Source: RMDB library M2PK90, as collected in RNAgym. Chemical mapping of a 177-nucleotide RNA with 2A3 and DMS. Reactivities are rounded to 0.1 and cut off at 0 and 3.

RNA sequence: GGGAACGACUCGAGUAGAGUCGAAAAUUAAAGGUGGUGGUGGAGGAGGUACGCCUCCAGCUGCUCAGCCGACGUACCGCACACACGCCUUUUCGGCAUAGAGCAGCAAUAGGGUAUCCUUAAAAAACGUAAUUACUACGUUCGCGUAGUAAUUACGAAAAGAAACAACAACAACAAC
Reactivity to 2A3 in 0.01 (KOAc 150mM, MgCl2 10mM, bicine 150mM(pH8.5), 24C), signal-to-noise 3, nucleotides 027 to 126: u090u040a100a020a020g040g000u050g020g030u060g010g050u060g020g020a040g010g010a010g000g010u020a020c050g060c010c000u030c010c000a020g000c000u000g000c010u010c040a020g000c000c000g010a050c010g020u030a030c020c040g060c010a060c010a010c000a020c090g060c000c040u130u130u070u030c020g000g000c010a060u100a070g000a000g010c000a010g000c000a000a060u090a060g040g000g030u080a070u110c010c020u090u120a070a100a010a030a000a020
Reactivity to DMS in 0.01 (KOAc 150mM, MgCl2 10mM, bicine 150mM(pH8.5), 24C), signal-to-noise 4, nucleotides 027 to 126: u010u020a070a100a100g010g010u000g010g010u000g000g020u000g000g000a050g000g000a040g000g010u000a040c080g010c010c010u000c050c030a100g020c000u000g000c000u000c000a050g000c000c020g010a100c270g010u000a050c070c020g000c120a110c150a120c170a090c120g010c090c110u000u000u010u000c020g020g000c010a150u010a090g010a000g000c000a010g010c000a040a030u000a040g010g010g000u000a070u000c040c030u000u010a010a040a050a070a040a140
2A3 adducts were read by reverse transcription with SuperScript II with manganese.